About this RNA
The data come from the RNA Mapping Database (RMDB), library OK1LIB. Structure probing data (DMS and 2A3) for a 177-nucleotide construct. For DMS the reverse transcriptase was MarathonRT. For 2A3 the reverse transcriptase was SuperScript II with manganese. The 2A3 profile rests on 2,725 reads. The reactions ran in a buffer of 150 mM KOAc, 10 mM MgCl2 and 150 mM bicine (pH 8.5), at 24 C.
[RMDB]
RNA sequence: GGGAACGACUCGAGUAGAGUCGAAAAGAGUUCGUGAAAGCAUAUCUAGGUGACUGUGUCACGAUCUUUCACUGUCCAAAUUCAUUUGUUGACUGACCAAACAUUUCCGCAAUUAACGACGCAAAGCCCGUAGGUGGAUAUUCGUAUCCACCUACGGAAAAGAAACAACAACAACAAC
Reactivity to DMS in 0.01 (KOAc 150mM, MgCl2 10mM, bicine 150mM(pH8.5), 24C), signal-to-noise 2, nucleotides 027 to 126: g020a070g000u040u000c040g030u000g040a040a070a060g000c180a130u020a080u000c070u050a140g010g000u020g000a000c010u010g000u020g000u020c000a010c000g010a000u000c040u000u000u000c040a050c000u020g010u000c050c010a030a060a030u010u030c150a040u000u010u000g030u020u000g010a170c050u000g000a040c090c090a020a040a040c060a070u000u030u010c050c010g000c040a010a110u030u020a100a060c070g000a060c070g030c020a040a030a080g040c110
Reactivity to 2A3 in 0.01 (KOAc 150mM, MgCl2 10mM, bicine 150mM(pH8.5), 24C), signal-to-noise 5, nucleotides 027 to 126: g080a010g050u080u140c060g000u020g000a030a010a010g020c020a060u050a030u180c030u100a090g190g030u060g070a100c110u180g090u090g040u230c000a000c000g010a030u170c000u000u030u010c020a020c080u110g040u000c020c000a020a040a060u130u150c090a110u090u020u080g150u060u060g050a070c050u020g030a020c010c030a060a070a080c030a090u060u100u080c040c020g020c010a030a020u080u060a110a030c070g000a020c010g010c030a070a040a000g090c000